[RMDB]
RNA sequence: GGGAACGACUCGAGUAGAGUCGAAAAUAUAUAGACAGGUAUGCUCUGGGAUUAAGUCAUGGCUUCCUCCUUUUUCUUGGACUAUGUGAGCUUGUGAGUUUUAAACUCUAGAGUCGCUGGAUGUGAGCAUAUGUACACCUUUCGAGGUGUACAUAUGAAAAGAAACAACAACAACAAC
Reactivity to DMS in 0.01 (KOAc 150mM, MgCl2 10mM, bicine 150mM(pH8.5), 24C), signal-to-noise 7, nucleotides 027 to 126: u010a080u010a090u010a100g000a120c050a060g010g010u000a060u010g000c030u010c030u000g010g000g000a090u000u000a040a060g010u010c030a050u000g010g010c030u000u000c090c090u010c010c020u010u010u010u010u000c090u030u000g010g010a120c190u000a050u010g010u000g010a060g020c030u000u010g020u000g000a040g010u000u000u020u010a060a060a060c020u000c010u000a130g010a040g020u000c240g010c020u000g000g000a090u000g000u000g010a110g000
Reactivity to 2A3 in 0.01 (KOAc 150mM, MgCl2 10mM, bicine 150mM(pH8.5), 24C), signal-to-noise 3, nucleotides 027 to 126: u070a000u000a010u040a030g040a020c010a030g050g060u120a030u140g000c000u000c010u050g050g010g060a080u080u100a100a010g050u020c040a060u020g050g000c000u080u000c020c000u060c000c020u050u150u040u060u040c050u020u060g030g010a020c040u060a090u130g060u020g040a030g030c000u030u050g050u030g020a010g010u030u020u020u170a130a090a020c030u030c040u050a030g020a010g080u040c040g000c080u020g050g050a080u090g080u060g120a040g040